The data come from the RNA Mapping Database (RMDB), library OK1LIB. Structure probing data (2A3 and DMS) for a 177-nucleotide construct. For DMS, 6,667 sequencing reads were counted.

RNA sequence: GGGAACGACUCGAGUAGAGUCGAAAACGUUCGAAUGGCUGAAUGCUCUAUAGAUAGUGAAACAGGUGAUAUCGGCGCAUCGACUACGUGCCUGUCUCGGCUACGAUCAGCCGGGGUGCAUGUGCCAAGUGUGUCUACGUUUCGACGUGGACGCGCUAAAAGAAACAACAACAACAAC
Reactivity to 2A3 in 0.01 (KOAc 150mM, MgCl2 10mM, bicine 150mM(pH8.5), 24C), signal-to-noise 9, nucleotides 027 to 126: c020g000u050u020c010g020a100a110u010g010g000c010u020g040a070a030u110g030c010u000c020u060a110u040a160g140a170u070a060g160u110g170a090a080a030c050a040g000g060u050g070a060u070a050u170c020g010g000c030g000c040a020u030c020g030a030c020u040a010c040g020u030g000c000c020u070g020u040c000u000c000g000g000c000u040a060c130g230a200u150c100a000g000c000c000g000g000g000g000u020g010c000a010u030g010u020g040c000c010a020
Reactivity to DMS in 0.01 (KOAc 150mM, MgCl2 10mM, bicine 150mM(pH8.5), 24C), signal-to-noise 2, nucleotides 027 to 126: c300g000u100u050c090g000a250a020u010g000g000c010u000g000a020a020u010g000c020u000c020u000a090u030a050g000a080u030a040g010u010g000a080a080a060c110a030g000g000u000g000a070u010a070u010c020g000g020c040g010c050a030u010c040g010a040c070u000a010c040g020u000g000c010c130u000g000u010c000u000c000g000g010c000u000a070c280g000a100u030c130a040g000c000c000g000g000g000g000u000g000c010a010u010g010u000g010c020c030a080